[RMDB]
RNA sequence: GGGAACGACUCGAGUAGAGUCGAAAAUGAAAUAGCGUGUGCAAGACGCUGAUCUUGCCAUGAUCUGGAACUUUAGUGCUGAGGUCCGAGUUCCAGGGUAUCAUGUCGGACCAUAGCACUAAUUAAAACUGAAGAGGAGGUUCGCCUCCUCUUCAGUAAAAGAAACAACAACAACAAC
Reactivity to 2A3 in 0.01 (KOAc 150mM, MgCl2 10mM, bicine 150mM(pH8.5), 24C), signal-to-noise 2, nucleotides 027 to 126: u150g060a000a030a040u210a050g050c000g030u010g080u100g030c010a030a000g010a000c050g060c300u110g070a240u040c010u000u000g020c000c000a010u040g010a090u090c030u020g050g060a060a080c020u040u030u020a030g000u010g000c010u030g020a010g010g030u020c010c000g000a000g040u060u020c070c020a000g070g050g000u130a050u150c040a060u070g090u050c020g000g010a000c000c000a010u020a000g000c000a030c010u010a010a010u030u020a000a020a000
Reactivity to DMS in 0.01 (KOAc 150mM, MgCl2 10mM, bicine 150mM(pH8.5), 24C), signal-to-noise 2, nucleotides 027 to 126: u010g000a070a090a150u000a040g000c010g030u000g000u020g000c040a030a010g020a030c010g000c210u000g000a090u000c010u000u000g010c010c000a010u000g000a070u010c030u000g010g000a120a130c110u000u000u000a010g000u000g010c000u000g000a070g040g000u000c000c010g000a040g010u000u010c140c100a080g000g000g040u010a070u010c090a090u000g010u010c010g000g000a030c000c000a040u000a010g000c000a000c030u000a000a010u000u000a040a040a030
Background
Chemical mapping of a 177-nucleotide RNA with 2A3 and DMS. 2A3 adducts were read by reverse transcription with SuperScript II with manganese. For 2A3, 1,354 sequencing reads were counted. The RNA was probed in 150 mM KOAc, 10 mM MgCl2 and 150 mM bicine (pH 8.5) at 24 C.